Structure probing data (DMS and 2A3) for a 177-nucleotide construct.
The RNA was probed in 150 mM KOAc, 10 mM MgCl2 and 150 mM bicine (pH 8.5) at 24 C.
Values cover nucleotides 27 to 126.
For DMS the reverse transcriptase was MarathonRT.
The data come from the RNA Mapping Database (RMDB), library M2PK50.
[RMDB]
RNA sequence: GGGAACGACUCGAGUAGAGUCGAAAAGCCGAAGAGUUCGCUCUUCGGCGACGAAUUUGGCGUACAUGAGAGUCUACAGUACUAGCCAUCCCAGAUGUACAAAUAAGCAUUGCUUCGGCAAUGCUAACUUGUCACUCGUGUUCGCACGAGUGACAAGAAAAGAAACAACAACAACAAC
Reactivity to DMS in 0.01 (KOAc 150mM, MgCl2 10mM, bicine 150mM(pH8.5), 24C), signal-to-noise 1, nucleotides 027 to 126: g000c000c000g000a010a000g010a040g030u010u000c210g050c000u000c000u010u000c020g070g030c010g010a010c110g000a110a070u000u000u020g020g030c000g030u000a030c020a070u000g010a230g010a100g000u000c090u000a140c090a110g000u000a010c010u000a090g000c020c010a000u000c030c040c010a230g010a110u000g030u020a070c120a040a040a040u030a220a030g000c010a010u000u000g000c010u000u000c120g030g000c010a000a000u000g000c000u000a000a030
Reactivity to 2A3 in 0.01 (KOAc 150mM, MgCl2 10mM, bicine 150mM(pH8.5), 24C), signal-to-noise 1, nucleotides 027 to 126: g030c000c000g020a000a000g010a010g040u090u140c150g000c060u000c000u000u000c000g000g080c000g010a000c000g150a040a100u020u050u080g010g000c020g020u020a010c050a220u050g020a050g010a040g260u030c060u080a050c040a050g000u000a000c010u060a050g000c000c000a050u000c040c000c000a030g120a150u230g000u030a060c000a020a130a030u180a170a050g000c000a010u010u000g000c000u000u060c190g040g000c000a010a010u000g000c000u000a020a020